[RMDB]
RNA sequence: GGGAACGACUCGAGUAGAGUCGAAAAGAUAUGGAUCCGAAGAGCUUUGAUCAUAAUGUCGGAAACGAUUAUGGGAGCUUUAGGAUCCUAAGUCAAAGAGUCUAAGGAGUUCGCUCCUUAGACUCAAGAUUAGUUUAUACUUCGGUAUAAACUAAUCAAAAGAAACAACAACAACAAC
Reactivity to DMS in 0.01 (KOAc 150mM, MgCl2 10mM, bicine 150mM(pH8.5), 24C), signal-to-noise 4, nucleotides 027 to 126: g010a010u000a010u010g000g000a010u000c000c010g000a180a180g000a010g010c010u000u000u020g000a080u010c000a000u000a010a010u010g010u010c000g020g010a010a000a020c000g010a050u000u000a010u000g010g010g000a010g020c010u000u000u010a290g000g000a010u000c000c000u000a000a060g000u000c010a080a100a140g000a020g020u000c000u000a010a000g000g000a020g010u000u010c290g010c000u000c000c000u000u000a000g000a000c000u000c000a010a060
Reactivity to 2A3 in 0.01 (KOAc 150mM, MgCl2 10mM, bicine 150mM(pH8.5), 24C), signal-to-noise 5, nucleotides 027 to 126: g010a000u010a010u030g000g000a000u020c010c000g020a100a030g030a030g030c040u300u300u040g000a000u020c000a000u010a040a070u250g190u180c010g000g000a000a000a000c000g000a000u010u000a000u010g000g010g000a010g010c000u130u210u080a030g000g010a000u010c000c000u000a000a000g000u000c000a000a100a140g010a000g000u010c000u000a000a000g010g010a010g010u070u130c190g110c110u000c000c000u000u000a000g000a000c000u000c000a000a000

An RNA of 177 nucleotides, treated with DMS and 2A3 and read out base by base. For DMS the reverse transcriptase was MarathonRT. 2A3 adducts were read by reverse transcription with SuperScript II with manganese. The RNA was probed in 150 mM KOAc, 10 mM MgCl2 and 150 mM bicine (pH 8.5) at 24 C.